Chemical mapping of a 177-nucleotide RNA with DMS and 2A3.
The DMS profile rests on 2,207 reads.
For 2A3 the reverse transcriptase was SuperScript II with manganese.
[RMDB]
RNA sequence: GGGAACGACUCGAGUAGAGUCGAAAAGAUAUGGAGCUUUCUAUGGAGCUGCUCGGAAACGAGAUAGCUAUGAAGUAGGGCUCCUAAGUCAAACUGGAAACUUCUACUUCGGUAGAAGUUUCCAGAACUAAUAGAUUAAGUUCGCUUAAUCUAUUAGAAAAGAAACAACAACAACAAC
Reactivity to DMS in 0.01 (KOAc 150mM, MgCl2 10mM, bicine 150mM(pH8.5), 24C), signal-to-noise 2, nucleotides 027 to 126: g020a060u000a300u010g000g010a000g010c000u000u000u000c010u010a020u000g010g000a000g020c000u000g000c010u010c010g000g020a130a090a150c000g020a020g010a090u010a020g020c010u000a150u020g010a130a250g000u000a010g000g000g000c000u000c000c000u010a010a040g010u000c050a090a140a250c000u000g010g000a010a000a000c000u000u000c010u000a010c000u000u020c180g040g000u000a010g000a020a000g010u010u000u000c010c000a000g010a020a140
Reactivity to 2A3 in 0.01 (KOAc 150mM, MgCl2 10mM, bicine 150mM(pH8.5), 24C), signal-to-noise 2, nucleotides 027 to 126: g000a020u080a060u190g020g000a010g000c040u060u300u190c040u220a050u030g060g010a010g000c000u020g000c020u020c000g000g090a050a070a040c010g000a020g050a130u220a070g000c020u030a300u300g040a060a020g000u020a000g010g040g000c000u000c020c000u000a090a000g020u000c040a080a080a080c010u040g000g000a000a020a000c010u010u000c000u020a000c020u010u090c280g030g000u000a000g000a000a000g000u000u000u020c000c010a000g000a000a000